[RMDB]
RNA sequence: GGGAACGACUCGAGUAGAGUCGAAAACUCCACCCGAAGGUAGAGAGGGUUGACGAAGCGUCGCGAUGUCGGCAGGUAGGGCGAUGGUUCGAUUGGCUUCGAGCGCCCAGCGGGCCCGGGAAGCGUAUAGCUACCCUCUGUUCGCAGAGGGUAGCUAAAAAGAAACAACAACAACAAC
Reactivity to DMS in 0.01 (KOAc 150mM, MgCl2 10mM, bicine 150mM(pH8.5), 24C), signal-to-noise 1, nucleotides 027 to 126: c090u010c000c030a110c030c000c030g030a120a130g060g010u000a080g000a130g020a180g020g030g000u000u020g030a120c010g020a120a050g000c090g090u000c030g020c050g030a100u010g010u000c030g020g020c120a090g000g010u000a050g000g000g030c040g020a040u000g010g030u010u010c020g020a110u000u020g020g030c040u000u000c020g000a200g020c160g000c040c000c020a090g000c120g020g000g000c020c050c090g030g000g000a090a060g020c060g010u000a090